Source: RMDB library OK3TST, as collected in RNAgym.
Structure probing data (2A3) for a 207-nucleotide construct.
Values cover nucleotides 27 to 156.
Conditions: 150 mM KOAc, 10 mM MgCl2 and 150 mM bicine (pH 8.5), 24 C.
RNA sequence: GGGAACGACUCGAGUAGAGUCGAAAAAAGCAUGAAGACGUGGACGCUACCCGGUUCGAGUCUAACCCGCCCGGCCAGCGCUCGAAGGAUGAAGUGUACAUCCCCGGUAUCGGGUGGGUAGUACCUGCUGAAGACUACCCUAAGACUUCCACGCCGGCCCAUCGUAGGUAUUCGUACCUACGAUGGGAAAAGAAACAACAACAACAAC
Reactivity to 2A3 in 0.01 (KOAc 150mM, MgCl2 10mM, bicine 150mM(pH8.5), 24C), signal-to-noise 1, nucleotides 027 to 156: a000a000g180c130a130u190g040a090a060g100a000c040g050u070g000g010a000c080g010c040u060a040c020c000c000g010g010u000u070c080g000a000g020u000c020u020a060a040c010c000c040g080c000c000c000g040g000c000c050a100g010c120g000c080u160c130g100a080a000g040g000a040u080g040a160a060g260u160g010u260a070c000a000u030c000c000c020c010g000g040u050a120u300c000g010g000g030u020g020g000g000u000a000g000u020a050c020c030u100g040c070u100g070a050a010g040a120c020u010a030c000c000c030u060a080a000g040a040c030u070u020c030c000a030c010g030c040c040g080g050